[RMDB]
RNA sequence: GGGAACGACUCGAGUAGAGUCGAAAAGGUUCCGGUGCCGUCGGCGCCCUACCAAGACAAGAAACGGGGGAAAUGACCCCUACCAAGCCCCACCCCUCCCGCCCGAGGCGCUUCGUCACUCGGGCGGGAUGAGACACAUGUUCGCAUGUGUCUCAUCAAAAGAAACAACAACAACAAC
Reactivity to DMS in 0.01 (KOAc 150mM, MgCl2 10mM, bicine 150mM(pH8.5), 24C), signal-to-noise 8, nucleotides 027 to 126: g000g000u010u010c070c160g010g030u010g020c020c030g000u020c100g010g020c030g010c020c010c040u010a080c040c030a110a100g020a120c160a090a100g010a060a080a090c160g000g010g000g000g010a090a140a130u030g010a150c030c000c000c010u000a020c080c080a090a120g000c020c000c000c020a300c030c010c010c010u000c010c000c000g010c000c000c010g010a020g000g000c100g010c090u030u030c220g010u020c030a060c000u000c000g000g000g020c010g000g000
Reactivity to 2A3 in 0.01 (KOAc 150mM, MgCl2 10mM, bicine 150mM(pH8.5), 24C), signal-to-noise 9, nucleotides 027 to 126: g040g000u040u020c030c010g000g030u040g030c020c040g180u160c090g030g000c020g020c010c000c000u010a030c000c010a080a040g140a120c070a080a060g080a140a130a060c100g010g010g000g010g030a080a130a060u190g120a120c000c010c000c000u000a010c010c010a030a020g010c010c000c000c000a040c000c000c000c000u010c000c000c000g000c000c000c000g010a010g040g020c060g020c100u230u180c090g190u210c020a030c060u000c000g000g000g000c000g000g000
Chemical mapping of a 177-nucleotide RNA with DMS and 2A3. For DMS the reverse transcriptase was MarathonRT. As a SHAPE reagent, 2A3 marks flexible, mostly unpaired nucleotides at the ribose 2'-OH. The RNA was probed in 150 mM KOAc, 10 mM MgCl2 and 150 mM bicine (pH 8.5) at 24 C. Values are in units of 0.01, from 0 to 300, in steps of 10. It was measured as part of the RMDB libraries RFM100 and RFMREP. 2A3 adducts were read by reverse transcription with SuperScript II with manganese.